RNA sequence: GGGAACGACUCGAGUAGAGUCGAAAAGGUGAAAGCGAAUCGGGGAAGAUAAGCUAGCAGCACAAAGGAACCGAUUCCCACCAAGUUCGGAAAGAGAUACCGGGCGAGGCGCUGAAGAAAGAAUCUCAAACUCCCGCAAGUUUCGACUUGCGGGAAAGCACUGUGAAAGAUUCGUCUUUCACAGUGCAAAAGAAACAACAACAACAAC
Reactivity to 2A3 in 0.01 (KOAc 150mM, MgCl2 10mM, bicine 150mM(pH8.5), 24C), signal-to-noise 2, nucleotides 027 to 156: g060g010u030g060a210a030a010g030c050g020a000a000u020c020g030g000g040g020a010a060g030a170u110a160a050g030c020u110a030g070c120a020g000c030a020c010a080a120a060g130g000a050a000c010c000g020a010u010u000c000c020c000a020c010c010a020a030g010u020u020c010g010g030a160a090a050g030a040g010a000u030a020c010c010g000g000g000c030g000a040g030g010c030g030c060u130g030a040a030g020a080a100a010g040a060a070u020c010u010c030a070a070a100c030u010c010c000c000g000c000a000a000g000u040u120u200c120g060a020c000u000u000g000c000g030g010g000a000a000a000
Background:
This 207-nucleotide RNA was probed chemically with 2A3. Source: RMDB library M2RFPK, as collected in RNAgym. The RNA was probed in 150 mM KOAc, 10 mM MgCl2 and 150 mM bicine (pH 8.5) at 24 C. Values cover nucleotides 27 to 156. The 2A3 profile rests on 1,353 reads.